[RMDB]
RNA sequence: GGGAACGACUCGAGUAGAGUCGAAAAAUCUUGGCGAAGUCAGCGCGGAAGGAGCGCGCAACUCCUUACCCUCGCCUUUUUUUUUCCGCUCCCGUUCGCGAAAGCGUACAGCGGAAAAGGGACCAAAUUGACGUAAUUCUUUCGAGAAUUACGUCAAAAAAGAAACAACAACAACAAC
Reactivity to DMS in 0.01 (KOAc 150mM, MgCl2 10mM, bicine 150mM(pH8.5), 24C), signal-to-noise 3, nucleotides 027 to 126: a050u010c070u000u000g000g010c010g010a060a120g000u000c150a100g020c120g010c250g010g000a050a010g000g020a020g020c000g010c290g000c210a060a090c000u000c000c000u000u000a130c090c000c020u000c040g000c000c010u000u000u000u000u000u000u000u000u000c000c000g000c010u000c090c110c100g000u010u010c000g010c010g000a120a060a130g010c010g000u000a020c080a070g000c000g000g000a000a000a000a020g000g010g000a150c090c090a050a080a130
Source: RMDB library M2PK90, as collected in RNAgym.
Structure probing data (DMS) for a 177-nucleotide construct.
The DMS profile rests on 2,438 reads.
The reactions ran in a buffer of 150 mM KOAc, 10 mM MgCl2 and 150 mM bicine (pH 8.5), at 24 C.
Values are in units of 0.01, from 0 to 300, in steps of 10.